[RMDB]
RNA sequence: GGGAACGACUCGAGUAGAGUCGAAAACAGGGGACGCCUCAGUGAACGGUUCCUCCCAACGUCCCCGUGAUCGGUGUGAGGAUCUCGCGUCUUACAAAGGCCCACGAAUGAGGGAACCCUGUGGGCGAUGGCAUACUCACUUCGGUGAGUAUGCCAUAAAAGAAACAACAACAACAAC
Reactivity to DMS in 0.01 (KOAc 150mM, MgCl2 10mM, bicine 150mM(pH8.5), 24C), signal-to-noise 1, nucleotides 027 to 126: c050a080g000g050g010g000a160c160g000c010c010u020c130a080g000u030g000a090a070c130g000g000u010u030c050c030u000c030c030c040a040a150c000g000u010c010c000c070c090g000u030g000a030u010c000g120g110u000g000u000g000a080g050g010a120u040c030u000c080g080c220g030u000c000u030u050a090c280a020a100a160g020g010c030c010c030a100c010g000a050a090u030g000a110g000g000g000a030a090c030c000c070u000g000u030g000g030g010c070g000
Reactivity to 2A3 in 0.01 (KOAc 150mM, MgCl2 10mM, bicine 150mM(pH8.5), 24C), signal-to-noise 1, nucleotides 027 to 126: c000a020g000g050g000g020a010c030g010c130c000u040c060a240g030u120g230a050a000c000g000g000u050u060c000c000u000c030c000c000a010a010c000g000u000c050c030c000c020g030u020g020a030u150c020g000g090u080g120u060g050a050g110g000a020u040c120u100c030g010c000g020u020c000u090u110a090c200a040a000a070g020g000c010c070c000a080c010g110a090a030u250g010a150g000g010g000a000a010c010c070c000u000g000u000g020g010g000c000g020